Description: Source: RMDB library TTRDES, as collected in RNAgym. The record gives the reactivity of an RNA of 177 nucleotides to DMS and 2A3. The DMS profile rests on 15,475 reads. 2A3 adducts were read by reverse transcription with SuperScript II with manganese. For 2A3, 53,911 sequencing reads were counted. The RNA was probed in 150 mM KOAc, 10 mM MgCl2 and 150 mM bicine (pH 8.5) at 24 C.
RNA sequence: GGGAACGACUCGAGUAGAGUCGAAAAGAUAUGGAUCGUCUGAGGGAGCGUGCCUUCGGAAACGAAGGUAAACGCGACGAUCUCACAUGACGAUCCUAAGUCAAACGGAUAUGGUUCGCCAUAUCCGGUCGUAUAUUCACUUCGGUGAAUAUACGACAAAAGAAACAACAACAACAAC
Reactivity to DMS in 0.01 (KOAc 150mM, MgCl2 10mM, bicine 150mM(pH8.5), 24C), signal-to-noise 9, nucleotides 027 to 126: g020a010u000a070u010g000g000a000u000c000g010u010c010u020g010a020g010g000g000a020g010c000g040u000g000c000c000u000u000c000g010g000a020a020a040c000g010a020a000g000g020u000a020a080a030c020g020c000g000a060c300g010a030u010c010u000c010a060c300a160u010g000a020c000g000a010u000c000c000u000a000a050g000u000c020a110a080a300c010g000g000a000u000a010u000g000g010u000u010c280g010c000c000a010u000a000u000c000c000g000
Reactivity to 2A3 in 0.01 (KOAc 150mM, MgCl2 10mM, bicine 150mM(pH8.5), 24C), signal-to-noise 7, nucleotides 027 to 126: g000a000u020a000u060g000g000a000u000c010g010u010c070u090g010a010g000g010g000a030g000c010g000u020g030c000c000u000u000c010g010g000a010a010a000c000g000a000a000g000g000u090a190a180a020c010g010c000g050a120c000g000a010u000c000u010c000a150c040a230u300g010a000c000g000a000u010c000c000u000a010a000g010u000c020a080a030a100c020g000g000a000u000a000u010g060g040u060u100c300g020c140c010a000u000a000u000c000c000g000